[RMDB]
RNA sequence: GGGAACGACUCGAGUAGAGUCGAAAAGUUAAAAGGACUGGAAUAGAAUUUACAUCACAUAUGCUUCGCCACACUCACGCAACGCAGCUAAUUAGGGAAGGAUGGGAUGUUGCGUUCGUUCAAAAGAGAAAGAUUCCCCAUUCGUGGGGAAUCUUUCAAAAGAAACAACAACAACAAC
Reactivity to 2A3 in 0.01 (KOAc 150mM, MgCl2 10mM, bicine 150mM(pH8.5), 24C), signal-to-noise 2, nucleotides 027 to 126: g060u040u030a090a080a050a080g160g010a020c020u050g040g000a120a000u040a080g080a040a020u210u130u180a190c070a040u080c180a060c030a040u080a000u090g010c070u000u040c000g010c010c020a060c000a000c000u090c000a000c060g000c010a010a020c020g030c020a040g000c050u020a050a170u150u060a150g080g050g050a070a040g030g070a080u090g000g030g030a100u080g000u050u030g010c000g070u000u050c060g060u040u000c030a000a090a000a130g210a000
Reactivity to DMS in 0.01 (KOAc 150mM, MgCl2 10mM, bicine 150mM(pH8.5), 24C), signal-to-noise 2, nucleotides 027 to 126: g000u000u000a030a090a110a100g040g000a040c050u020g000g000a130a100u050a040g020a100a130u020u010u100a010c010a090u000c060a040c140a000u000a010u020g060c070u050u030c000g000c090c000a040c100a100c030u000c040a050c050g000c100a060a120c030g010c090a050g000c040u000a060a070u000u000a140g010g010g020a080a110g020g010a070u050g030g000g030a030u010g000u020u000g000c160g010u000u000c040g020u000u020c100a030a010a000a100g000a190

The data come from the RNA Mapping Database (RMDB), library OK1LIB. An RNA of 177 nucleotides, treated with 2A3 and DMS and read out base by base. For 2A3, 786 sequencing reads were counted. 2A3 adducts were read by reverse transcription with SuperScript II with manganese. The reactions ran in a buffer of 150 mM KOAc, 10 mM MgCl2 and 150 mM bicine (pH 8.5), at 24 C.